[RMDB]
RNA sequence: GGGAACGACUCGAGUAGAGUCGAAAAGAUGAGCGUCUGGGAGAGCUGAUUCUGCAGACCGGCUAGGAGCCGCAGGGCGUUCUCCGGGGCGCGGCCCGAGACCGUCGCGUCGUAGACAGCCAGGAGAACCCGUGGGUAAUUUCGAUUACCCACGGGUAAAAGAAACAACAACAACAAC
Reactivity to DMS in 0.01 (KOAc 150mM, MgCl2 10mM, bicine 150mM(pH8.5), 24C), signal-to-noise 2, nucleotides 027 to 126: g020a130u040g000a070g000c010g020u010c000u080g030g020g000a010g000a070g000c000u040g000a120u010u000c010u000g000c150a230g010a130c200c090g030g010c110u020a210g000g000a160g010c010c060g010c090a030g050g000g010c020g020u000u000c000u010c010c000g030g020g010g010c000g010c000g010g000c000c000c020g000a100g010a050c140c060g000u010c060g010c000g000u000c030g030u030a060g000a080c070a040g000c080c020a100g020g010a070g030a040
Reactivity to 2A3 in 0.01 (KOAc 150mM, MgCl2 10mM, bicine 150mM(pH8.5), 24C), signal-to-noise 2, nucleotides 027 to 126: g100a070u230g060a000g000c020g020u010c020u060g120g000g020a020g000a000g000c020u030g040a300u030u000c000u010g000c020a030g080a180c000c010g030g000c150u210a160g090g060a010g060c010c010g000c030a000g000g010g000c020g000u000u020c010u040c000c000g000g010g000g000c030g000c040g000g000c020c000c000g040a070g010a010c020c000g020u020c080g030c000g030u000c000g000u000a000g010a020c000a010g000c020c000a080g010g020a130g020a080